[RMDB]
RNA sequence: GGGAACGACUCGAGUAGAGUCGAAAAUACUAGUGCCUAAGGUGGCAUUAGAGUAUCACAACCUGAAUAACCAAGUAGUCAAAGAGAGUUUGGAAGUGGAAGCAACUGAUUCUUUUGAUCCCACCCAGAUUGUCGUCUUAUUCGUAAGACGACAAUCAAAAGAAACAACAACAACAAC
Reactivity to DMS in 0.01 (KOAc 150mM, MgCl2 10mM, bicine 150mM(pH8.5), 24C), signal-to-noise 2, nucleotides 027 to 126: u010a130c010u010a040g020u000g000c020c010u010a150a170g040g000u010g010g010c000a020u000u000a030g010a150g010u020a060u010c100a110c130a100a110c000c020u020g030a090a110u010a100a090c080c040a040a080g020u010a040g000u010c070a050a050a070g000a070g000a040g010u010u000u010g000g000a050a130g010u000g020g030a070a070g000c040a020a110c080u000g030a060u000u000c010u000u010u010u000g000a100u010c010c010c010a190c060c050c070a120
Reactivity to 2A3 in 0.01 (KOAc 150mM, MgCl2 10mM, bicine 150mM(pH8.5), 24C), signal-to-noise 2, nucleotides 027 to 126: u080a000c000u000a000g000u000g000c000c010u110a260a140g300g000u070g000g000c000a000u010u040a000g000a020g070u020a040u120c090a060c020a070a140c000c030u050g050a120a070u100a060a050c000c000a050a020g040u020a000g040u100c030a010a140a010g060a030g000a020g040u090u090u230g070g010a070a000g040u010g010g080a060a020g030c010a000a040c040u000g030a160u060u040c020u050u050u050u080g040a060u020c020c010c000a000c000c000c020a000